[RMDB]
RNA sequence: GGGAACGACUCGAGUAGAGUCGAAAAGACCUGGGCGGUAAGGACAUCGUCCAGCUCAAGGCGUACCUGGACAAGGCCGCGCCGAUUGCCGCGCUGACCCGCCUGCAAGGCCGCCAGCCGGAGGGCGACACCCACAACCUCACCGACGCCGAGAUGGAAUCUCGCAAAAAUUCGUUUUUGCGAGAUUAAAAGAAACAACAACAACAAC
Reactivity to 2A3 in 0.01 (KOAc 150mM, MgCl2 10mM, bicine 150mM(pH8.5), 24C), signal-to-noise 3, nucleotides 027 to 156: g040a020c000c020u010g000g000g000c020g020g030u050a130a060g140g050a060c030a080u040c030g010u000c000c010a000g030c010u010c020a050a050g010g000c000g010u020a050c010c010u070g060g040a070c070a110a060g040g000c080c040g050c050g010c020c000g030a050u070u210g040c010c010g000c000g040c060u030g080a130c010c010c000g000c020c010u030g050c060a060a090g000g020c000c030g060c050c040a010g020c020c000g020g010a020g010g010g000c020g020a010c000a030c020c020c010a040c020a050a060c010c000u020c030a050c010c020g030a060c020g030c020c010g040a050g020a100u140g060g040
Reactivity to DMS in 0.01 (KOAc 150mM, MgCl2 10mM, bicine 150mM(pH8.5), 24C), signal-to-noise 2, nucleotides 027 to 156: g010a120c030c020u000g000g020g010c000g020g020u000a050a110g020g030a130c050a030u000c020g000u010c000c000a070g000c060u010c010a090a090g010g030c010g030u000a080c050c010u000g010g020a200c090a170a080g000g020c010c070g000c040g000c010c000g020a090u010u000g000c030c050g000c050g000c040u070g010a100c030c030c050g020c040c030u000g000c090a300a160g000g020c010c030g030c030c030a120g040c060c050g010g020a200g010g000g000c000g030a080c050a170c020c030c040a130c030a120a090c060c020u000c030a080c030c030g000a110c050g020c000c020g020a100g010a080u020g020g010
Source: RMDB library OK3TST, as collected in RNAgym. The record gives the reactivity of an RNA of 207 nucleotides to 2A3 and DMS. The 2A3 profile rests on 2,423 reads. Values cover nucleotides 27 to 156. The reactions ran in a buffer of 150 mM KOAc, 10 mM MgCl2 and 150 mM bicine (pH 8.5), at 24 C.